Conditions: 150 mM KOAc, 10 mM MgCl2 and 150 mM bicine (pH 8.5), 24 C. Structure probing data (DMS) for a 177-nucleotide construct.

RNA sequence: GGGAACGACUCGAGUAGAGUCGAAAAAAAAAAGAUAUGGAGCUGCUACCCACCGUGAGCAGCGUUGAAAUCUUAUCGGAAACGAUAAGAUGGAGCUGCUCCACGAGGCAGCUCCUAAGUCAAAAAACAAUGGGUAUAUGUUCGCAUAUACCCAUUGAAAAGAAACAACAACAACAAC
Reactivity to DMS in 0.01 (KOAc 150mM, MgCl2 10mM, bicine 150mM(pH8.5), 24C), signal-to-noise 2, nucleotides 027 to 126: a000a020a030a060a060a070g000a070u000a130u010g000g000a030g000c000u000g000c010u000a140c050c000c030a300c100c010g020u010g000a160g000c000a020g000c000g010u000u000g000a060a160a000u010c000u000u000a000u000c010g010g000a040a060a070c010g010a010u000a000a010g010a010u000g000g000a040g010c000u000g000c000u010c080c040a010c030g010a120g010g000c000a000g010c020u000c000c000u010a010a030g020u050c040a000a040a100a100a100a100
DMS (dimethyl sulfate) methylates the pairing face of unpaired adenines and cytosines.